An RNA of 177 nucleotides, treated with 2A3 and DMS and read out base by base. It was measured as part of the RMDB library TTRDEL. For DMS the reverse transcriptase was MarathonRT.
[RMDB]
RNA sequence: GGGAACGACUCGAGUAGAGUCGAAAAGAUAUGGAGGCAGCUUUUGACGACUUAUGUUCGGAAACGAACAGAAGGUCGAUAAGCUGCUCCUAAGUCAAACCGACUAUCCGUUCGCGGAUAGUCGGAAGUUACCUAACAUCUUCGGAUGUUAGGUAACAAAAGAAACAACAACAACAAC
Reactivity to 2A3 in 0.01 (KOAc 150mM, MgCl2 10mM, bicine 150mM(pH8.5), 24C), signal-to-noise 5, nucleotides 027 to 126: g030a030u070a040u170g020g010a040g200g260c010a020g000c020u080u090u170u250g240a150c070g000a010c060u300u040a050u040g010u000u010c000g000g030a080a070a050c020g000a000a000c010a020g020a050a020g020g000u000c010g010a000u010a010a000g000c000u000g000c000u000c000c000u010a080a010g050u030c030a040a040a130c010c000g000a000c000u000a010u000c010c000g030u080u080c300g000c020g150g000a000u010a000g000u000c000g000g000a000a010
Reactivity to DMS in 0.01 (KOAc 150mM, MgCl2 10mM, bicine 150mM(pH8.5), 24C), signal-to-noise 4, nucleotides 027 to 126: g000a050u000a300u020g010g000a040g020g020c000a000g010c000u000u010u000u000g020a180c080g000a060c010u010u000a190u000g010u000u010c010g010g010a080a060a190c010g000a010a010c000a010g000a100a150g000g010u000c000g020a080u000a030a010g000c000u000g010c000u000c000c000u000a010a170g000u000c050a050a090a210c000c000g010a020c000u000a000u000c000c010g010u000u010c250g030c010g000g010a010u000a000g020u000c000g000g000a000a030
The reactions ran in a buffer of 150 mM KOAc, 10 mM MgCl2 and 150 mM bicine (pH 8.5), at 24 C. 2A3 adducts were read by reverse transcription with SuperScript II with manganese.